[RMDB]
RNA sequence: GGGAACGACUCGAGUAGAGUCGAAAAGAUAUGGAUCCGGAUAGGGAGCUGUUCGGAAACGAAUACAGCAUCGAUCUAUACGGAUCCUAAGUCAAAACAAUCUAAUAUGUUCGCAUAUUAGAUUGAAGUAUAGUUAAGACUUCGGUCUUAACUAUACAAAAGAAACAACAACAACAAC
Reactivity to 2A3 in 0.01 (KOAc 150mM, MgCl2 10mM, bicine 150mM(pH8.5), 24C), signal-to-noise 4, nucleotides 027 to 126: g020a000u060a030u110g000g000a000u000c000c000g020g010a000u010a000g170g060g010a010g010c000u000g010u020u000c010g010g030a050a030a000c020g000a030a050u280a200c010a000g000c010a130u300c050g090a040u030c020u000a010u010a010c000g000g000a000u000c000c000u000a000a010g010u010c010a000a020a080a180c000a010a000u000c000u010a010a000u000a010u010g040u060u090c290g010c160a000u000a000u010u000a000g010a010u000u010g010a050a000
Reactivity to DMS in 0.01 (KOAc 150mM, MgCl2 10mM, bicine 150mM(pH8.5), 24C), signal-to-noise 4, nucleotides 027 to 126: g000a020u000a290u000g000g000a000u000c000c000g000g000a010u000a000g020g020g010a030g040c000u000g000u000u000c000g020g000a080a050a120c010g010a030a080u010a060c030a010g020c000a290u000c110g000a050u010c000u000a010u000a010c000g010g010a010u000c000c000u000a020a060g010u010c040a100a070a080a220c010a000a010u010c000u000a000a000u000a000u000g000u000u020c240g020c000a000u000a010u000u000a000g010a000u000u000g010a040a110

Description
Chemical mapping of a 177-nucleotide RNA with 2A3 and DMS. Values cover nucleotides 27 to 126. Conditions: 150 mM KOAc, 10 mM MgCl2 and 150 mM bicine (pH 8.5), 24 C. High 2A3 reactivity points to a flexible backbone, as in loops and unpaired stretches. For DMS the reverse transcriptase was MarathonRT. Source: RMDB library TTRDEL, as collected in RNAgym. 2A3 adducts were read by reverse transcription with SuperScript II with manganese.